About this RNA
The record gives the reactivity of an RNA of 177 nucleotides to DMS and 2A3.
RNA sequence: GGGAACGACUCGAGUAGAGUCGAAAAUCGGUACUAUACAGGGAAGGGAAGUCACUCGCAUACGUGUGUGUGCAUUUCUUGCUAUUGCUGCUUAGCUUCUCUAAAACACUGGGCUACGUUUUUCAACACAAUUUACAAGGUUCGCCUUGUAAAUUGUAAAAGAAACAACAACAACAAC
Reactivity to DMS in 0.01 (KOAc 150mM, MgCl2 10mM, bicine 150mM(pH8.5), 24C), signal-to-noise 5, nucleotides 027 to 126: u010c060g000g010u010a040c100u000a110u010a090c110a050g010g000g000a050a060g010g010g000a030a050g000u010c030a040c020u010c030g010c020a040u010a080c160g040u000g020u010g000u000g010u000g010c110a040u000u000u000c010u000u000g010c030u000a040u010u010g020c210u000g000c020u000u010a040g010c010u000u000c020u000c020u010a060a060a100a090c150a050c040u000g010g000g010c070u000a080c120g010u000u000u000u000u000c030a070a130c250
Reactivity to 2A3 in 0.01 (KOAc 150mM, MgCl2 10mM, bicine 150mM(pH8.5), 24C), signal-to-noise 3, nucleotides 027 to 126: u070c010g020g020u010a040c040u030a030u070a150c250a060g010g000g030a040a020g020g000g030a010a000g030u020c010a000c020u040c020g000c010a010u020a090c240g080u020g010u020g000u010g010u010g030c020a010u020u020u040c000u010u030g030c000u060a090u190u290g040c080u010g000c000u060u010a000g000c010u010u020c000u000c010u030a050a060a030a010c060a010c030u020g020g040g000c040u070a050c070g030u040u010u010u040u120c030a060a020c030
Source: RMDB library RFMREP, as collected in RNAgym.